Overview
Conditions: 150 mM KOAc, 10 mM MgCl2 and 150 mM bicine (pH 8.5), 24 C. Structure probing data (2A3 and DMS) for a 177-nucleotide construct. It was measured as part of the RMDB library TTRDES. For 2A3, 10,591 sequencing reads were counted. The DMS profile rests on 4,371 reads.
RNA sequence: GGGAACGACUCGAGUAGAGUCGAAAAGAUAUGGAUUCGUGGAUAGAGCGAGGAUCUAGGCUCGGAAACGAGCCUAGGGAGCUCGUCCACGCGAAUCCUAAGUCAAAGUCCUAGUUCGCUAGGACAACGGUCUUAUAUUCUUCGGAAUAUAAGACCGAAAAGAAACAACAACAACAAC
Reactivity to 2A3 in 0.01 (KOAc 150mM, MgCl2 10mM, bicine 150mM(pH8.5), 24C), signal-to-noise 4, nucleotides 027 to 126: g010a010u060a020u120g020g010a010u020u100c080g020u020g030g030a080u150a300g040a040g000c030g060a300g040g010a010u000c000u010a000g000g000c000u000c010g020g000a030a030a020c000g000a020g000c050c000u000a000g000g000g000a000g000c010u010c020g020u000c000c000a000c030g000c010g070a020a040u000c010c000u010a080a000g030u040c050a160a100a070g000u000c000c000u000a000g000u050u080c300g020c200u010a000g000g010a010c000a000a010
Reactivity to DMS in 0.01 (KOAc 150mM, MgCl2 10mM, bicine 150mM(pH8.5), 24C), signal-to-noise 3, nucleotides 027 to 126: g000a040u000a300u010g010g000a040u010u010c060g010u000g000g000a020u010a100g040a020g020c000g010a060g020g000a050u010c000u000a000g000g010c020u000c000g000g010a070a070a130c010g000a010g020c010c000u000a010g000g000g000a060g010c010u000c010g000u000c000c010a020c040g010c300g000a010a030u000c000c000u000a030a170g000u000c040a080a130a230g000u000c000c010u000a000g010u000u030c210g010c000u010a020g000g000a000c020a040a110